[RMDB]
RNA sequence: GGGAACGACUCGAGUAGAGUCGAAAAUCUACGGAUGGGGCACUUGUAUCUUGGGUAGCUUUGCUAUCAGAUGCCCUAGAUGGAGGACAUAUAAAUCGUAAAGAAUUUGACAAUCUAAUCAAAGAUAUUAACAUGAUAAACGAACGGGCCUCUAAAGCUCUAGUAGUCACUUCGGUGACUACUAGAGAAAAGAAACAACAACAACAAC
Reactivity to DMS in 0.01 (KOAc 150mM, MgCl2 10mM, bicine 150mM(pH8.5), 24C), signal-to-noise 1, nucleotides 027 to 156: u000c040u000a130c110g050g000a170u000g020g030g120g000c010a100c040u020u030g000u030a120u000c090u020u010g000g000g040u030a060g000c030u000u000u010g000c010u000a090u000c010a060g000a000u000g010c000c010c000u000a060g000a180u000g040g010a050g000g000a030c030a060u000a240u010a040a160a130u000c060g020u000a060a180a220g030a210a240u000u000u020g000a060c130a000a170u030c030u000a090a090u000c100a100a070a020g010a130u000a170u000u000a070a170c100a090u000g020a160u000a040a100a030c010g000a100a090c050g040g060g000c000c000u000c010u010a090a130a180g010
Reactivity to 2A3 in 0.01 (KOAc 150mM, MgCl2 10mM, bicine 150mM(pH8.5), 24C), signal-to-noise 1, nucleotides 027 to 156: u000c000u040a020c070g090g000a150u050g000g030g020g060c020a030c030u090u050g100u240a110u150c090u090u070g060g010g000u000a010g000c000u210u160u300g000c000u000a020u030c010a000g030a140u010g000c010c020c000u000a000g020a000u060g030g000a000g000g000a020c000a000u270a010u110a050a120a080u080c000g030u040a000a230a000g100a020a170u000u000u120g010a020c020a030a010u010c050u140a050a040u020c030a080a040a210g000a030u080a080u160u090a000a000c000a030u120g010a080u050a030a140a000c010g010a020a000c060g100g090g050c000c010u020c020u030a140a030a030g020
This 207-nucleotide RNA was probed chemically with DMS and 2A3. It was measured as part of the RMDB library OK3TST. DMS adducts were read by reverse transcription with MarathonRT. Conditions: 150 mM KOAc, 10 mM MgCl2 and 150 mM bicine (pH 8.5), 24 C.